[RMDB]
RNA sequence: GGGAACGACUCGAGUAGAGUCGAAAAGAUAUGGACACGCUCCGAUAAGUUGGUCUCGGAAACGAGACACAACUUUUGACGGAGCGGUCCUAAGUCAAACCGACUGGUACUUCGGUACCAGUCGGAAGUGAUGUGUGUUGUUCGCAACACACAUCACAAAAGAAACAACAACAACAAC
Reactivity to DMS in 0.01 (KOAc 150mM, MgCl2 10mM, bicine 150mM(pH8.5), 24C), signal-to-noise 1, nucleotides 027 to 126: g000a020u000a270u000g020g000a020c010a120c000g000c000u000c000c000g020a090u000a000a010g000u000u000g000g010u000c000u020c000g010g000a130a040a080c000g030a010g000a020c010a080c010a000a000c000u000u000u030u000g010a280c120g000g000a010g010c000g010g000u000c000c000u000a000a100g000u000c030a060a070a300c000c000g000a000c000u000g000g030u000a000c000u010u000c180g020g010u000a000c000c000a000g000u000c000g000g010a010a010
Reactivity to 2A3 in 0.01 (KOAc 150mM, MgCl2 10mM, bicine 150mM(pH8.5), 24C), signal-to-noise 2, nucleotides 027 to 126: g000a020u020a000u080g000g000a090c140a040c300g020c000u000c000c000g080a170u100a300a040g000u010u020g010g010u000c000u000c010g000g060a050a080a020c010g000a000g020a010c020a040c000a020a000c000u040u020u030u080g100a010c050g010g010a000g000c000g000g000u030c000c000u000a020a010g030u000c040a040a010a150c010c000g020a000c000u040g030g000u000a010c010u060u120c300g120g020u000a010c010c070a000g020u010c020g000g000a010a000

The record gives the reactivity of an RNA of 177 nucleotides to DMS and 2A3.
DMS adducts were read by reverse transcription with MarathonRT.
The reactions ran in a buffer of 150 mM KOAc, 10 mM MgCl2 and 150 mM bicine (pH 8.5), at 24 C.
The 2A3 profile rests on 2,556 reads.
Source: RMDB library TTRDEL, as collected in RNAgym.
2A3 adducts were read by reverse transcription with SuperScript II with manganese.